[RMDB]
Chemical mapping of a 177-nucleotide RNA with 2A3 and DMS. DMS adducts were read by reverse transcription with MarathonRT. Values cover nucleotides 27 to 126.
RNA sequence: GGGAACGACUCGAGUAGAGUCGAAAAGAUAUGGAAUCUGUACACAGCAACAGCCCAAUUCGGAAACGAAUUGGGACAUGCUGGUAUGAUUCCUAAGUCAAAUCUCCGUUUCUUCGGAAACGGAGAAUCAUGCAGUGAGGUUCGCCUCACUGCAUGAAAAAGAAACAACAACAACAAC
Reactivity to 2A3 in 0.01 (KOAc 150mM, MgCl2 10mM, bicine 150mM(pH8.5), 24C), signal-to-noise 1, nucleotides 027 to 126: g000a000u050a030u070g010g010a010a000u010c050u140g040u090a000c300a010c000a140g030c060a140a180c040a210g010c000c010c020a000a000u020u030c030g020g050a020a070a050c010g010a010a000u000u000g000g000g000a000c010a030u070g000c020u000g000g000u040a040u020g010a000u000u010c000c000u000a110a000g040u000c020a020a000a290u060c000u000c000c000g020u020u000u000c000u040u060c290g160g000a000a000a040c000g020g030a000g000a010a020
Reactivity to DMS in 0.01 (KOAc 150mM, MgCl2 10mM, bicine 150mM(pH8.5), 24C), signal-to-noise 1, nucleotides 027 to 126: g000a060u000a300u030g000g000a010a000u000c030u010g060u000a000c030a130c010a000g000c020a070a080c300a230g000c000c000c000a000a010u000u000c000g020g000a110a100a160c000g000a000a000u000u000g020g000g000a000c070a080u000g020c000u000g010g000u000a000u020g000a020u010u010c000c000u000a040a080g000u000c010a100a130a210u000c000u000c000c000g010u000u000u000c000u040u010c200g060g000a000a000a000c000g010g000a000g010a010a070